[RMDB]
RNA sequence: GGGAACGACUCGAGUAGAGUCGAAAAAAGUCUGCAGGAUGUGGGGAUUGUUUGGCUUUUGGAGGAGGAAGGAGGGAUUCAAGACACAUUGUAGAGGUUUGAGUCUGAGCGGACAGUGGUGCUGUGGUCAAAUGGGAAGAUUCGUCUUCCCAUUUGAAAAAGAAACAACAACAACAAC
Reactivity to 2A3 in 0.01 (KOAc 150mM, MgCl2 10mM, bicine 150mM(pH8.5), 24C), signal-to-noise 2, nucleotides 027 to 126: a000a010g060u030c020u030g010c020a030g020g020a080u060g040u070g020g030g000g010a040u050u050g100u100u030u070g050g010c000u120u050u090u120g020g020a040g000g010a040g030g010a110a000g030g030a040g010g020g010a030u080u040c030a050a010g050a020c030a010c010a110u060u190g090u100a050g030a080g060g070u080u070u110g030a020g020u000c030u050g020a030g020c020g000g020a010c030a040g030u040g030g000u090g030c040u050g010u040g020g020
Reactivity to DMS in 0.01 (KOAc 150mM, MgCl2 10mM, bicine 150mM(pH8.5), 24C), signal-to-noise 6, nucleotides 027 to 126: a070a070g010u010c030u000g030c070a110g020g010a080u000g020u000g010g010g000g010a110u000u000g010u000u000u010g020g010c080u000u010u010u000g020g010a090g000g000a100g010g000a070a060g000g000a120g010g000g000a100u000u000c060a060a050g000a100c080a070c090a090u000u010g020u010a080g010a130g020g000u000u000u000g010a100g010u000c050u000g000a120g000c070g000g010a050c070a060g020u000g010g000u000g000c040u000g020u000g010g000
An RNA of 177 nucleotides, treated with 2A3 and DMS and read out base by base.
The RNA was probed in 150 mM KOAc, 10 mM MgCl2 and 150 mM bicine (pH 8.5) at 24 C.
It was measured as part of the RMDB library OK2TRN.
Reactivities are rounded to 0.1 and cut off at 0 and 3.